Chemical mapping of a 177-nucleotide RNA with DMS and 2A3. DMS (dimethyl sulfate) methylates the pairing face of unpaired adenines and cytosines. The data come from the RNA Mapping Database (RMDB), libraries RFM100 and RFMREP. The reactions ran in a buffer of 150 mM KOAc, 10 mM MgCl2 and 150 mM bicine (pH 8.5), at 24 C. High 2A3 reactivity points to a flexible backbone, as in loops and unpaired stretches. 2A3 adducts were read by reverse transcription with SuperScript II with manganese.

[RMDB]
RNA sequence: GGGAACGACUCGAGUAGAGUCGAAAACGGUUCUUGUUAAGUUCAGAGGUGACUGAAUAAAUAGGUCCUCUCCUUUGAGCUGCGGGACAGACAGCCCUGUUGGCUGUUUUCAUUUUACAGCAAGGGACUGGAUGACUGAAUUCGUUCAGUCAUCCAGAAAAGAAACAACAACAACAAC
Reactivity to DMS in 0.01 (KOAc 150mM, MgCl2 10mM, bicine 150mM(pH8.5), 24C), signal-to-noise 3, nucleotides 027 to 126: c080g020g010u000u000c040u000u020g020u010u020a120a030g010u000u010c010a030g000a020g000g010u030g000a030c010u000g000a150a190u010a070a130a070u010a300g000g000u020c010c300u030c110u010c020c050u020u000u000g000a020g010c000u000g000c160g000g000g000a000c060a040g000a090c130a090g030c010c000c090u010g000u040u030g010g000c020u000g010u000u000u010u040c250a070u010u010u010u020a090c070a000g030c030a040a040g000g000g000a130
Reactivity to 2A3 in 0.01 (KOAc 150mM, MgCl2 10mM, bicine 150mM(pH8.5), 24C), signal-to-noise 2, nucleotides 027 to 126: c030g030g000u030u000c010u050u160g060u050u190a110a000g000u010u020c000a000g000a010g030g010u020g030a030c030u050g060a060a080u180a160a100a030u180a110g000g040u020c000c080u050c040u030c010c010u000u000u000g010a040g010c010u010g020c020g020g000g010a000c000a020g030a010c030a020g090c000c000c010u090g170u140u080g150g000c000u010g000u000u020u050u060c000a000u000u020u130u130a050c010a000g020c020a030a060g030g000g060a060